This 177-nucleotide RNA was probed chemically with DMS and 2A3. The DMS profile rests on 764 reads. The 2A3 profile rests on 866 reads. It was measured as part of the RMDB library OK2TST.
RNA sequence: GGGAACGACUCGAGUAGAGUCGAAAACUAAGUCGAGAGCAAUCACGCGUGUGGUCAUGGCGUAUUCCAGAUUAAGGUUAAGAAUUUUCGUCUGCGCGAAUGGUACACCGAUACCACUAUCGGACAACCCUGCUCGUAAUUUCGAUUACGAGCAGGGAAAAGAAACAACAACAACAAC
Reactivity to DMS in 0.01 (KOAc 150mM, MgCl2 10mM, bicine 150mM(pH8.5), 24C), signal-to-noise 1, nucleotides 027 to 126: c050u010a090a060g010u000c010g000a100g000a090g020c120a040a070u000c080a120c070g020c100g070u000g050u000g020g030u010c040a040u020g050g000c030g000u010a090u000u050c020c100a080g000a070u000u000a070a050g000g030u000u000a070a060g080a110a040u010u010u010u010c090g030u000c020u020g010c090g060c130g040a000a160u000g000g020u000a060c100a120c050c040g010a090u000a060c010c160a100c150u020a060u010c070g040g000a120c230a070a070
Reactivity to 2A3 in 0.01 (KOAc 150mM, MgCl2 10mM, bicine 150mM(pH8.5), 24C), signal-to-noise 1, nucleotides 027 to 126: c020u100a030a060g090u000c050g060a000g000a010g160c070a010a050u080c020a030c040g080c020g000u040g040u060g080g070u050c020a060u060g100g000c030g000u070a090u010u000c000c000a020g010a100u090u150a140a010g090g000u030u060a060a050g070a160a180u040u000u030u060c070g000u000c020u000g010c040g000c020g110a060a050u120g070g050u030a020c070a040c070c020g020a030u000a050c020c060a040c020u060a050u000c020g030g010a010c010a010a050